The record gives the reactivity of an RNA of 177 nucleotides to DMS and 2A3.
RNA sequence: GGGAACGACUCGAGUAGAGUCGAAAAGGAGGCCGAAGGCGCUGACGUAGUGCAGAUUUUCCUUGGCAAUCCGCAGAGCUGGAAGGCUCCCAAGCCGCGGGACGACGCCGCCGCGCUGAAAGCCGCGAGGCGUGGCAACUUUCGAGUUGCCACGCCUAAAAGAAACAACAACAACAAC
Reactivity to DMS in 0.01 (KOAc 150mM, MgCl2 10mM, bicine 150mM(pH8.5), 24C), signal-to-noise 2, nucleotides 027 to 126: g000g010a080g020g000c000c020g010a290a130g000g020c300g020c010u000g040a080c030g020u000a100g000u020g020c030a040g000a160u000u000u010u020c100c020u010u010g000g010c040a010a060u000c100c080g030c150a090g000a020g000c000u000g000g040a130a150g000g000c020u000c030c010c060a120a120g000c110c040g000c090g010g010g010a100c140g000a100c120g020c040c010g000c110c110g020c050g000c000u020g000a110a170a150g010c060c040g050c080g000
Reactivity to 2A3 in 0.01 (KOAc 150mM, MgCl2 10mM, bicine 150mM(pH8.5), 24C), signal-to-noise 1, nucleotides 027 to 126: g040g010a050g000g080c000c030g060a040a040g020g000c030g020c040u030g040a190c020g090u180a100g040u070g150c010a030g050a160u080u010u120u150c020c000u020u060g080g000c020a050a110u090c010c030g000c090a040g000a020g040c060u060g040g040a010a080g080g000c030u050c000c020c000a050a010g090c010c020g000c050g060g020g070a100c060g000a020c060g020c000c000g160c020c030g000c000g020c040u060g040a130a070a000g060c000c000g030c030g020
Notes
The RNA was probed in 150 mM KOAc, 10 mM MgCl2 and 150 mM bicine (pH 8.5) at 24 C. The 2A3 profile rests on 1,007 reads.